[RMDB]
RNA sequence: GGGAACGACUCGAGUAGAGUCGAAAAGAUAUGGAACGUCUGGAGAAUCUGCGAUGAAAUCGGAAACGAUGGAGCAGUGGCUCCAGAGCGUUCCUAAGUCAAACUCCCUCAGUUCGCUGAGGGAGAAGUCACAUUAAGGCUUCGGCCUUAAUGUGACAAAAGAAACAACAACAACAAC
Reactivity to DMS in 0.01 (KOAc 150mM, MgCl2 10mM, bicine 150mM(pH8.5), 24C), signal-to-noise 1, nucleotides 027 to 126: g000a030u010a300u010g000g000a040a020c040g000u000c000u000g000g010a040g000a130a080u000c000u000g010c010g000a060u000g000a060a160a010u010c030g000g000a100a080a250c020g000a010u000g010g000a100g000c000a020g000u010g010g000c010u000c010c020a020g000a050g010c000g000u000u020c010c000u010a010a130g000u000c030a080a070a170c010u000c000c000c000u020c000a040g030u010u010c300g010c000u000g000a030g000g000g000a000g000a000a060
Reactivity to 2A3 in 0.01 (KOAc 150mM, MgCl2 10mM, bicine 150mM(pH8.5), 24C), signal-to-noise 1, nucleotides 027 to 126: g020a000u090a070u120g000g000a000a020c000g040u000c000u020g060g020a000g010a090a140u030c010u010g050c000g300a300u030g070a020a060a000u010c000g030g000a040a040a040c020g010a040u010g010g000a000g030c020a010g000u070g030g040c000u010c000c000a000g000a010g020c000g000u020u000c000c000u000a010a000g000u000c030a000a080a140c010u000c000c000c040u010c000a030g010u020u100c220g000c150u000g000a010g030g000g010a000g000a010a010
Chemical mapping of a 177-nucleotide RNA with DMS and 2A3. The reactions ran in a buffer of 150 mM KOAc, 10 mM MgCl2 and 150 mM bicine (pH 8.5), at 24 C. The 2A3 profile rests on 2,118 reads. It was measured as part of the RMDB library TTRDEL. For DMS, 961 sequencing reads were counted. 2A3 adducts were read by reverse transcription with SuperScript II with manganese. High 2A3 reactivity points to a flexible backbone, as in loops and unpaired stretches.